This 170-nucleotide RNA was probed chemically with 2A3 and DMS. For DMS the reverse transcriptase was MarathonRT. The 2A3 profile rests on 50,900 reads. As a SHAPE reagent, 2A3 marks flexible, mostly unpaired nucleotides at the ribose 2'-OH.
[RMDB]
RNA sequence: GGGAACGACUCGAGUAGAGUCGAAAAUUGAAGGUAAAACAGCCUGUGGGUGAAACACACCCACAGGGCCCAUUGGGCGCUAGCACUCUGGUAUCACGGAACCUUUGUGCGCCUGUUUUACCGAAGGAGGCUCUAGAGUUCGCUCUAGAGAAAAGAAACAACAACAACAAC
Reactivity to 2A3 in 0.01 (KOAc 150mM, MgCl2 10mM, bicine 150mM(pH8.5), 24C), signal-to-noise 9, nucleotides 027 to 129: u100u100g040a060a010g000g000u010a000a000a000a000c000a010g000c000c000u010g000u010g000g000g000u010g030a040a090a010c130a010c000a000c040c000c000a010c000a000g000g000g000c000c000c000a020u250u300g000g000g000c030g000c080u090a040g000c000a010c000u010c000u000g000g030u080a120u300c060a090c230g180g110a020a010c010c000u000u000u000g000u000g000c000g000c000c000u010g000u000u000u000u000a000c000c000g000a000a000g020g030a010g020g000
Reactivity to DMS in 0.01 (KOAc 150mM, MgCl2 10mM, bicine 150mM(pH8.5), 24C), signal-to-noise 8, nucleotides 027 to 129: u060u030g010a150a120g040g000u000a000a010a010a010c000a000g000c040c010u000g060u010g000g000g000u000g000a110a140a100c260a170c000a020c000c000c010a010c000a020g000g000g000c020c000c010a040u030u070g000g000g040c000g000c020u040a040g030c000a020c000u020c010u000g010g000u030a070u070c100a150c260g020g020a040a030c020c010u040u000u020g000u000g030c000g010c010c000u000g000u010u000u000u010a010c000c000g010a040a050g000g000a110g010g000